[RMDB]
Chemical mapping of a 207-nucleotide RNA with 2A3 and DMS. The RNA was probed in 150 mM KOAc, 10 mM MgCl2 and 150 mM bicine (pH 8.5) at 24 C. It was measured as part of the RMDB library OK3TST. For 2A3 the reverse transcriptase was SuperScript II with manganese. In probing experiments dimethyl sulfate is read out at A N1 and C N3, which are open when not base-paired. Reactivities are given for positions 27 through 156.

RNA sequence: GGGAACGACUCGAGUAGAGUCGAAAAGAAGGUGGGUCAGGGCUCGGACCGCACCGAUUAGAUGUAACUAUUACGAGCCCAUUAAUGGCGUUUUCGCCUAGGUCAGAGCACGCCGUGGCUCGACCCAAAUAAAUAAAUAAUAACACGGCGGAUAGAACCGAUACUAAUAUUUCGAUAUUAGUAUCGGAAAAGAAACAACAACAACAAC
Reactivity to 2A3 in 0.01 (KOAc 150mM, MgCl2 10mM, bicine 150mM(pH8.5), 24C), signal-to-noise 4, nucleotides 027 to 156: g130a030a040g000g000u010g000g000g000u020c040a030g010g010g000c000u000c000g000g010a000c020c000g090c030a000c000c010g000a040u060u120a070g030a020u070g080u170a110a060c090u060a100u220u140a040c000g000a000g000c000c000c000a000u020u130a020a070u060g000g000c030g060u060u040u260u300c020g020c000c000u000a010g000g000u000c090a100g000a000g000c010a000c030g000c000c000g000u000g000g000c000u000c000g010a000c010c000c010a090a140a050u150a000a080a020u110a040a060a030u180a040a030u030a040a010c000a000c000g000g000c140g000g010a090u170a050g110a080a020
Reactivity to DMS in 0.01 (KOAc 150mM, MgCl2 10mM, bicine 150mM(pH8.5), 24C), signal-to-noise 2, nucleotides 027 to 156: g020a180a160g000g020u000g000g000g060u000c000a040g030g050g050c010u000c000g020g020a010c010c040g030c020a060c000c010g000a240u010u010a080g010a180u000g000u010a090a180c120u010a160u000u000a090c040g000a070g040c000c000c020a180u000u000a030a050u010g020g030c000g040u010u000u000u010c020g030c020c010u000a040g000g040u010c050a110g030a040g000c010a050c020g000c040c010g020u000g000g030c000u010c000g010a030c010c000c000a030a050a070u000a050a040a100u000a070a050a120u010a090a110u000a060a050c020a020c000g000g020c000g000g010a130u000a130g000a160a160